[RMDB]
RNA sequence: GGGAACGACUCGAGUAGAGUCGAAAAAAUAGAAUCCUUAAUAGAAUCGUGGUAAGAAUAGAUCGUAUCCUCUUUAGAGGGGACGCUUAUUCGCUCUUUCACUUUGGGCAUGUUUUGGAUUUGGAUAGAUAAUUGAAGAGUUCGCUCUUCAAUUAUCAAAAGAAACAACAACAACAAC
Reactivity to 2A3 in 0.01 (KOAc 150mM, MgCl2 10mM, bicine 150mM(pH8.5), 24C), signal-to-noise 4, nucleotides 027 to 126: a000a000u240a020g030a010a010u020c000c000u020u010a030a010u020a050g070a060a040u040c020g030u030g050g050u080a040a030g010a020a020u030a070g050a030u070c010g010u040a050u010c010c010u040c030u160u180u160a130g030a010g050g010g010g010a000c000g010c020u070u060a070u050u050c020g020c030u010c000u010u090u040c020a030c060u040u030u040g070g060g020c100a060u050g030u000u030u030u030g000g000a000u000u000u020g020g000a010u030a110
Reactivity to DMS in 0.01 (KOAc 150mM, MgCl2 10mM, bicine 150mM(pH8.5), 24C), signal-to-noise 5, nucleotides 027 to 126: a060a090u010a150g000a050a030u000c000c000u010u000a020a030u000a060g010a090a030u000c060g020u000g010g010u010a020a060g010a020a020u010a120g010a040u000c220g010u000a080u000c000c000u000c000u000u000u010a130g010a040g010g000g000g000a010c010g010c230u010u000a070u000u010c040g010c120u010c030u000u000u000c030a010c020u000u000u000g010g010g020c080a150u000g000u000u000u000u000g000g010a040u000u000u000g030g010a150u000a100
Chemical mapping of a 177-nucleotide RNA with 2A3 and DMS.
The 2A3 profile rests on 5,530 reads.
Conditions: 150 mM KOAc, 10 mM MgCl2 and 150 mM bicine (pH 8.5), 24 C.